[RMDB]
RNA sequence: GGGAACGACUCGAGUAGAGUCGAAAAUCUGUUUACAAGUUAUCGUUAAGUCCAUGUCUGACUACGAUUCCGUAAACAGAAGCCAGUUUGCGUCAAGUCCGACAUGGACUCUUGACAGAACUGAUCACCAUGGACCUCAGUUCGCUGAGGUCCAUGGAAAAGAAACAACAACAACAAC
Reactivity to DMS in 0.01 (KOAc 150mM, MgCl2 10mM, bicine 150mM(pH8.5), 24C), signal-to-noise 2, nucleotides 027 to 126: u010c040u010g000u000u000u000a080c090a070a100g030u000u000a040u000c080g010u000u010a060a060g020u010c000c040a050u000g000u010c120u000g010a040c000u000a090c110g010a060u010u000c150c090g020u000a010a000a000c000a050g000a120a130g010c210c090a060g000u000u000u000g030c070g020u000c050a050a010g020u000c000c040g020a080c050a070u000g000g000a000c020u000c060u000u010g000a000c010a250g000a020a000c020u000g030a120u010c070a120
Reactivity to 2A3 in 0.01 (KOAc 150mM, MgCl2 10mM, bicine 150mM(pH8.5), 24C), signal-to-noise 1, nucleotides 027 to 126: u010c010u000g040u050u160u090a040c060a080a110g010u050u040a110u150c070g020u020u120a090a000g010u000c040c030a030u020g020u000c080u060g040a020c020u090a090c060g090a060u110u020c030c010g000u000a000a000a000c000a020g080a040a000g150c050c000a000g020u000u000u020g040c020g000u000c010a000a040g000u010c010c010g040a130c110a090u070g000g000a010c010u040c000u020u060g030a020c000a000g000a040a030c010u040g010a060u070c050a030

Structure probing data (DMS and 2A3) for a 177-nucleotide construct. 2A3 adducts were read by reverse transcription with SuperScript II with manganese.